[RMDB]
RNA sequence: GGGAACGACUCGAGUAGAGUCGAAAAUUUAAUCUAAUCUGACCGAUAGCUUUAAUAGUGAGGUAAGCUUUAAUAUAGCACUCCUAAUUCAUAACGCUACACUCGUGCAUAAUUUAUUUUUAAUUUGCUUAAACUGAAACUUCGGUUUCAGUUUAAGAAAAGAAACAACAACAACAAC
Reactivity to 2A3 in 0.01 (KOAc 150mM, MgCl2 10mM, bicine 150mM(pH8.5), 24C), signal-to-noise 6, nucleotides 027 to 126: u050u040u030a020a020u020c020u020a010a050u050c040u050g100a110c010c010g050a070u020a020g000c000u090u040u060a020a070u040a040g110u150g110a010g000g090u080a120a030g000c000u080u060u070a160a030u220a050u070a090g000c000a000c020u000c000c000u040a120a100u050u080c070a030u080a140a010c050g000c000u040a010c050a010c060u040c010g070u120g030c020a030u040a120a110u090u070u090a110u050u050u010u010u060a100a150u030u060u050g000
Reactivity to DMS in 0.01 (KOAc 150mM, MgCl2 10mM, bicine 150mM(pH8.5), 24C), signal-to-noise 3, nucleotides 027 to 126: u020u000u020a060a070u010c070u000a060a060u000c090u010g020a090c030c020g000a100u010a080g020c030u000u010u000a040a100u010a020g010u010g010a020g000g000u010a060a060g000c010u000u010u050a100a110u030a100u020a020g020c030a170c010u010c000c000u000a010a130u040u020c190a070u000a060a040c090g000c040u000a020c230a100c130u000c020g050u010g010c050a020u010a060a110u020u000u030a050u000u000u000u020u000a000a060u010u000u000g010